[RMDB]
This 177-nucleotide RNA was probed chemically with DMS and 2A3. Reactivities are given for positions 27 through 126. The data come from the RNA Mapping Database (RMDB), library M2PK90. For 2A3 the reverse transcriptase was SuperScript II with manganese. The reactions ran in a buffer of 150 mM KOAc, 10 mM MgCl2 and 150 mM bicine (pH 8.5), at 24 C. DMS (dimethyl sulfate) methylates the pairing face of unpaired adenines and cytosines.
RNA sequence: GGGAACGACUCGAGUAGAGUCGAAAAGGGGUUAGCGUUUGCAAAACGCUGUUAUUGCAAUGAUCUGGAUUUAGCGCAAGAAGGUCCGAAAUCCAGAUCAACAUUUCGGACCUCCGCGCUAAUAAAAUUCGUUAGGAAUGUUCGCAUUCCUAACGAAAAAAGAAACAACAACAACAAC
Reactivity to DMS in 0.01 (KOAc 150mM, MgCl2 10mM, bicine 150mM(pH8.5), 24C), signal-to-noise 4, nucleotides 027 to 126: g020g000g000g020u000u000a020g010c010g010u020u020u010g020c250a060a040a040a020c010g020c020u000g010u000u000a050u000u000g010c090a070a070u010g000a140u000c050u000g000g000a150u010u000u000a010g000c030g010c010a090a110g010a020a020g010g010u000c010c000g000a010a010a000u010c110c150a120g000a100u020c160a040a050c170a050u010u000u000c000g000g000a020c000c010u000c030c080g020c000g010c000u010a000a020u000a030a070a080a140
Reactivity to 2A3 in 0.01 (KOAc 150mM, MgCl2 10mM, bicine 150mM(pH8.5), 24C), signal-to-noise 1, nucleotides 027 to 126: g000g040g010g000u070u090a000g000c010g000u010u040u130g140c070a130a120a000a000c020g000c110u020g020u100u020a080u080u150g070c070a060a080u130g030a110u040c030u080g060g020a050u050u030u040a030g000c000g010c030a070a000g160a030a040g120g000u040c000c000g030a000a000a020u020c040c040a050g040a040u040c000a000a000c020a010u020u050u000c000g010g000a000c000c000u000c000c040g000c000g000c020u020a000a030u030a010a030a000a080